[RMDB]
RNA sequence: GGGAACGACUCGAGUAGAGUCGAAAAAUCCGUGGAUAUCGGGUGCGCACCGCUCCUCCUCCUGCUGUUCUCCUUCACAGCUAUGACCCAUGCGCCGCACAGGCAGUGUCCCGCUUCGUGUGCAAAAAAAACCGCCAGUACUUCGGUACUGGCGGAACAUUCUAUGGAUCUUCGGAUCCAUAGAAUGAAAAGAAACAACAACAACAAC
Reactivity to 2A3 in 0.01 (KOAc 150mM, MgCl2 10mM, bicine 150mM(pH8.5), 24C), signal-to-noise 2, nucleotides 027 to 156: a000u040c030c030g010u070g020g040a100u060a090u300c010g020g020g030u030g040c030g010c010a090c010c050g020c040u010c000c030u000c020c020u040c000c040u020g000c000u020g030u040u040c040u010c010c030u080u150c090a050c020a100g030c010u040a070u180g070a110c000c030c000a060u110g010c040g000c060c040g020c010a030c030a050g020g020c010a000g030u030g020u080c010c000c000g030c030u020u030c090g150u030g000u020g030c070a020a050a000a000a000a000a000a100c000c000g030c010c020a000g000u010a020c010u040u130c200g090g000u010a010c020u010g000g000c000g010g010a000a000
Reactivity to DMS in 0.01 (KOAc 150mM, MgCl2 10mM, bicine 150mM(pH8.5), 24C), signal-to-noise 1, nucleotides 027 to 156: a090u000c010c000g060u000g010g010a060u000a030u000c030g000g020g060u000g000c050g040c040a080c060c010g010c060u030c020c030u050c100c010u020c040c000u000g010c010u000g010u000u010c020u000c040c060u010u010c040a050c010a130g010c020u000a100u000g000a140c020c020c020a170u000g000c050g030c040c050g070c070a100c090a100g010g000c030a080g050u000g000u000c010c010c000g010c020u000u000c050g020u000g030u000g090c010a010a000a000a120a100a060a080a160c010c000g000c000c000a020g000u000a020c000u000u000c230g050g050u000a010c000u000g000g010c020g000g000a010a040